Conditions: 150 mM KOAc, 10 mM MgCl2 and 150 mM bicine (pH 8.5), 24 C. The record gives the reactivity of an RNA of 177 nucleotides to DMS and 2A3. The DMS profile rests on 1,001 reads. In probing experiments dimethyl sulfate is read out at A N1 and C N3, which are open when not base-paired.
[RMDB]
RNA sequence: GGGAACGACUCGAGUAGAGUCGAAAAGCCUAAGCGUUCGCGCUUAGGCAAAGAAAGCGAAAACGCAACGCCAACGGAAAGGCGAAUUCCGAACAACCUUAAAAAGUUGCCUCUUCGGAGGCAACAAGUAGAUUACAGGGUUCGCCCUGUAAUCUACAAAAGAAACAACAACAACAAC
Reactivity to DMS in 0.01 (KOAc 150mM, MgCl2 10mM, bicine 150mM(pH8.5), 24C), signal-to-noise 1, nucleotides 027 to 126: g000c000c000u000a000a010g030c000g010u000u010c270g030c000g000c000u030u010a000g010g000c000a010a010a060g000a030a070a170g000c000g020a100a090a100a080c090g000c030a110a130c030g010c010c060a080a170c040g000g000a030a050a020g010g030c030g000a030a100u000u000c020c000g010a050a060c100a030a040c050c090u010u010a040a130a090a110a130g010u010u000g020c000c000u000c000u000u020c180g010g010a000g000g010c000a000a000c000a000a050
Reactivity to 2A3 in 0.01 (KOAc 150mM, MgCl2 10mM, bicine 150mM(pH8.5), 24C), signal-to-noise 2, nucleotides 027 to 126: g010c000c000u000a000a000g000c000g020u030u140c220g000c000g010c110u000u000a000g030g000c000a000a000a000g010a010a030a000g000c040g100a150a120a060a140c070g000c010a030a030c020g010c000c000a050a010c050g070g010a100a010a030g030g020c030g010a100a110u090u000c000c000g020a020a020c040a060a050c010c030u130u180a060a140a050a010a030g010u000u000g000c010c000u020c020u040u120c200g090g000a000g010g020c000a000a000c000a000a000